Structure probing data (DMS and 2A3) for a 177-nucleotide construct. For DMS the reverse transcriptase was MarathonRT. The DMS profile rests on 85,709 reads. 2A3 adducts were read by reverse transcription with SuperScript II with manganese.
RNA sequence: GGGAACGACUCGAGUAGAGUCGAAAAUAUGCGACUCGGCGCGAUUUUAUAUCCGUGUAUUGCGUUGGUCGCAAAGGCAUGCACUGCCAUGCCGGGCGGUGCACGAAGAUGUAGCGUCGGCUAGUCAAGUCUCACGACCAUUCGUGGUUGUGGGGCUAAAAGAAACAACAACAACAAC
Reactivity to DMS in 0.01 (KOAc 150mM, MgCl2 10mM, bicine 150mM(pH8.5), 24C), signal-to-noise 9, nucleotides 027 to 126: u040a100u010g010c010g000a020c010u050c020g010g000c000g010c000g010a020u010u010u030u030a080u030a090u040c140c140g010u010g020u020a020u000u000g010c010g020u000u010g010g010u010c010g000c010a010a040a060g010g000c060a090u010g000c030a070c060u010g010c020c010a050u010g010c080c070g000g000g010c010g010g010u000g000c010a030c080g010a110a090g010a090u010g010u010a090g000c030g010u010c060g000g000c030u010a060g000u010c110a130
Reactivity to 2A3 in 0.01 (KOAc 150mM, MgCl2 10mM, bicine 150mM(pH8.5), 24C), signal-to-noise 9, nucleotides 027 to 126: u270a060u050g010c020g010a010c040u040c200g030g000c000g000c000g010a010u000u050u120u100a250u070a080u120c080c090g070u090g050u100a020u010u040g000c020g010u010u030g020g000u030c010g000c010a020a030a000g010g000c030a000u050g000c030a030c140u060g000c030c000a020u080g020c010c000g000g010g000c010g000g020u000g000c010a000c020g060a060a070g080a070u120g030u150a020g050c030g060u040c020g040g010c000u020a030g090u080c100a060